Structure probing data (2A3 and DMS) for a 207-nucleotide construct. DMS (dimethyl sulfate) methylates the pairing face of unpaired adenines and cytosines. It was measured as part of the RMDB library RNAMAK. Reactivities are rounded to 0.1 and cut off at 0 and 3.

RNA sequence: GGGAACGACUCGAGUAGAGUCGAAAAGGGGUCACCGUUUGACGCUCGAGACAUGAAAGAUGUACUGAAGCCUCCACGGUACAUGUUUCAACAGCUCGAGCCGAGGUGACGGAGGCACCCAAAUACCCUGACUCAAGUUCGCUUGAGUCAGGGUAAAACAUAUGAAUGAGUUCGCUCAUUCAUAUGUAAAAGAAACAACAACAACAAC
Reactivity to 2A3 in 0.01 (KOAc 150mM, MgCl2 10mM, bicine 150mM(pH8.5), 24C), signal-to-noise 8, nucleotides 027 to 156: g040g010g020g010u010c010a000c000c000g010u110u210u130g010a000c000g000c000u000c000g020a020g020a060c190a290u300g000a010a010a000g090a010u000g000u010a000c000u020g030a090a020g000c000c000u010c010c010a100c040g010g000u010a000c000a000u010g290u010u010u000c160a240a160c080a050g000c010u000c000g000a000g000c000c000g000a010g010g000u000g000a000c010g000g000a000g000g000c010a030c000c010c010a020a060a020u060a010c000c000c000u000g000a000c000u010c000a010a000g030u080u100c190g080c170u000u000g000a000g000u000c000a000g000g000g000u000a000a000a000
Reactivity to DMS in 0.01 (KOAc 150mM, MgCl2 10mM, bicine 150mM(pH8.5), 24C), signal-to-noise 3, nucleotides 027 to 156: g000g020g020g010u000c010a020c000c010g000u030u020u000g020a070c270g010c000u000c000g010a040g010a090c070a260u000g000a030a020a030g000a020u000g000u000a000c000u000g000a030a150g000c000c020u010c010c020a250c030g040g020u000a010c010a020u010g000u000u000u000c010a080a100c120a150g000c010u000c000g000a040g000c000c000g000a050g050g030u000g000a060c030g010g020a040g020g020c010a050c020c000c010a060a080a210u000a030c030c010c000u000g020a020c000u000c010a020a060g000u000u000c300g020c010u020u000g000a020g030u010c000a010g010g000g000u000a010a010a060